[RMDB]
RNA sequence: GGGAACGACUCGAGUAGAGUCGAAAAUCUUGGCCCCUUUUUCGUGGGCGGUGGUGUAGCCGUGCGGCUCGUGAAGGAACGCCGCGGGACCGCUCCUUUGCCCGAAGCCUUUCCGGAGCUUGCUGCCUCGAUAUGCUACCUUCGGGUAGCAUAUCGAAAAAGAAACAACAACAACAAC
Reactivity to DMS in 0.01 (KOAc 150mM, MgCl2 10mM, bicine 150mM(pH8.5), 24C), signal-to-noise 2, nucleotides 027 to 126: u010c030u010u010g000g020c000c000c000c090u000u010u000u030u030c090g040u000g000g000g000c000g070g010u030g000g020u010g020u030a070g020c080c070g010u020g010c050g040g000c000u000c030g000u050g010a150a170g010g030a040a100c300g020c010c040g000c020g010g010g030a070c080c020g000c020u000c020c030u010u010u040g000c000c010c040g030a150a130g010c050c020u010u010u000c010c010g000g000a110g010c040u000u000g010c020u000g010c020c050
Reactivity to 2A3 in 0.01 (KOAc 150mM, MgCl2 10mM, bicine 150mM(pH8.5), 24C), signal-to-noise 3, nucleotides 027 to 126: u040c030u030u050g050g000c000c000c000c000u040u060u040u050u130c130g030u160g010g030g000c060g020g000u080g050g060u090g050u080a050g030c010c050g090u080g010c010g040g000c030u020c070g080u110g070a160a070g080g030a070a000c060g020c020c000g000c000g000g000g000a080c000c010g000c000u020c000c000u050u050u100g020c000c000c000g040a070a010g000c000c020u050u030u000c010c000g010g020a020g010c030u020u040g010c010u040g000c000c000
Background: An RNA of 177 nucleotides, treated with DMS and 2A3 and read out base by base. 2A3 adducts were read by reverse transcription with SuperScript II with manganese.